Description
This 177-nucleotide RNA was probed chemically with DMS and 2A3. For DMS the reverse transcriptase was MarathonRT. The RNA was probed in 150 mM KOAc, 10 mM MgCl2 and 150 mM bicine (pH 8.5) at 24 C. For 2A3 the reverse transcriptase was SuperScript II with manganese. Source: RMDB library TTRDEL, as collected in RNAgym.
RNA sequence: GGGAACGACUCGAGUAGAGUCGAAAAGAUAUGGACCCACUCAGCCAUAUACUUCGUUGAAAUCGGAAACGAUGGAGAAGUAUGAUGGCUGGUGGGUCCUAAGUCAAAAGGGGUGUUCGCACCCCAAGUCUAUACUGAACUUCGGUUCAGUAUAGACAAAAGAAACAACAACAACAAC
Reactivity to DMS in 0.01 (KOAc 150mM, MgCl2 10mM, bicine 150mM(pH8.5), 24C), signal-to-noise 6, nucleotides 027 to 126: g010a040u000a300u000g000g000a010c000c000c000a000c000u010c010a010g010c000c000a000u000a020u000a010c000u000u000c000g000u010u020g020a080a160a020u000c000g000g010a130a100a170c000g010a000u000g000g000a060g010a010a020g000u000a000u000g000a020u000g000g000c010u000g000g020u000g000g000g000u000c000c000u000a010a050g010u000c030a060a060a100a100g000g000g000g020u000g010u000u010c210g020c020a020c000c000c000c000a010a030
Reactivity to 2A3 in 0.01 (KOAc 150mM, MgCl2 10mM, bicine 150mM(pH8.5), 24C), signal-to-noise 2, nucleotides 027 to 126: g000a010u060a030u130g010g010a000c000c030c000a020c030u300c030a000g000c000c000a000u010a010u000a010c020u030u000c020g260u240u040g000a020a040a000u010c000g010g020a050a030a030c000g000a000u020g000g010a030g010a020a010g000u000a010u040g220a010u010g000g000c000u010g000g000u000g030g000g000u010c000c000u010a000a000g000u010c010a030a010a040a140g000g010g000g000u040g010u100u170c240g060c110a010c010c000c000c000a000a000